[RMDB]
RNA sequence: GGGAACGACUCGAGUAGAGUCGAAAACGGGUUUUUGUCAAAUGGGCAAGUAAAUGGUUCAAUACUUGCGCAAAUAUUGUGUUUAGGAACCACCCUAUCCUAUCCGUAGGACCUCCUACACUACUAAGCUCGUAGUCCGAUUCGUCGGACUACGAGCAAAAGAAACAACAACAACAAC
Reactivity to 2A3 in 0.01 (KOAc 150mM, MgCl2 10mM, bicine 150mM(pH8.5), 24C), signal-to-noise 2, nucleotides 027 to 126: c000g010g010g010u080u020u020u100u040g240u080c110a080a110a050u100g120g000g000c000a010a000g060u150a050a230a010u210g160g000u120u230c010a110a000u030a130c020u020u030g020c010g000c020a020a020a040u240a120u120u110g110u000g040u100u130u080a020g000g000a000a000c010c010a010c000c010c000u060a110u080c030c000u010a060u260c110c110g050u030a000g080g080a040c010c030u020c020c000u020a000c000a000c080u000a000c000u000a150a000